[RMDB]
Source information: This 177-nucleotide RNA was probed chemically with 2A3 and DMS. It was measured as part of the RMDB library OK2TST.

RNA sequence: GGGAACGACUCGAGUAGAGUCGAAAAUCUGGGUGCUUUUUCAGGAUAAAUAGUGCGGUCGCGAUUUUGGUCAUGCUCGCAGGAUAGAUUCUUUUAUCUAUAUCCUUAGCAUAAAGUACUUUACCUAGUCAUAAUGCUGAUUCGUCAGCAUUAUGACAAAAGAAACAACAACAACAAC
Reactivity to 2A3 in 0.01 (KOAc 150mM, MgCl2 10mM, bicine 150mM(pH8.5), 24C), signal-to-noise 3, nucleotides 027 to 126: u020c020u030g070g000g010u010g020c050u040u100u010u040u080c030a010g000g040a010u030a080a180a040u140a080g130u040g010c020g050g060u110c030g010c010g010a020u070u090u090u300g110g000u040c010a010u020g040c010u000c040g020c030a000g000g030a030u010a020g010a010u090u130c020u110u210u100u080a040u040c010u020a060u010a000u060c000c000u000u060a010g000c010a010u030a060a020a000g020u000a010c000u020u060u060a080c020c010u000a020
Reactivity to DMS in 0.01 (KOAc 150mM, MgCl2 10mM, bicine 150mM(pH8.5), 24C), signal-to-noise 3, nucleotides 027 to 126: u010c160u020g000g020g050u000g010c030u010u000u000u000u000c050a060g000g000a030u000a050a110a120u000a060g020u000g020c010g030g000u000c050g030c060g010a020u000u000u010u020g010g000u010c030a040u000g000c020u000c100g020c060a050g010g010a060u010a000g000a030u000u000c300u000u010u020u000a020u000c010u000a210u000a140u010c000c010u000u010a110g010c080a050u000a030a030a040g010u000a010c010u000u000u000a170c060c040u000a120